[RMDB]
RNA sequence: GGGAACGACUCGAGUAGAGUCGAAAAAUUACGGGCGGCGCAGGUGGAGCUGCGAUCCCUCCGCCCAUCGCGUGCUCUCUCGGUGGCCCACACGCUGCAAACGGACAGGCGGGCCACCUGCAACGAAACUCUUAUGCUAUUUCGAUAGCAUAAGAGUAAAAGAAACAACAACAACAAC
Reactivity to 2A3 in 0.01 (KOAc 150mM, MgCl2 10mM, bicine 150mM(pH8.5), 24C), signal-to-noise 8, nucleotides 027 to 126: a000u200u140a100c080g000g000g000c020g010g000c010g010c010a010g030g050u120g080g140a090g080c010u020g010c020g020a050u050c020c000c000u000c000c000g010c000c000c000a040u070c030g020c030g020u030g020c020u030c010u000c020u020c160g000g000u010g000g020c000c050c000a040c000a010c050g120c000u050g010c050a140a190a150c060g050g100a100c010a040g030g080c030g020g010g000c000c000a000c000c000u000g000c010a040a050c010g060a160a030
Reactivity to DMS in 0.01 (KOAc 150mM, MgCl2 10mM, bicine 150mM(pH8.5), 24C), signal-to-noise 7, nucleotides 027 to 126: a090u010u010a090c160g010g010g020c020g010g010c100g010c110a050g010g010u010g010g000a160g010c020u000g010c030g000a100u000c010c040c010u010c020c000g010c010c010c010a070u010c060g010c060g010u000g010c060u000c060u000c100u010c140g000g020u000g010g010c000c000c010a080c040a100c120g010c020u000g010c150a070a090a150c190g000g000a120c040a070g000g010c080g000g000g010c000c010a010c010c000u000g010c070a080a050c090g010a110a110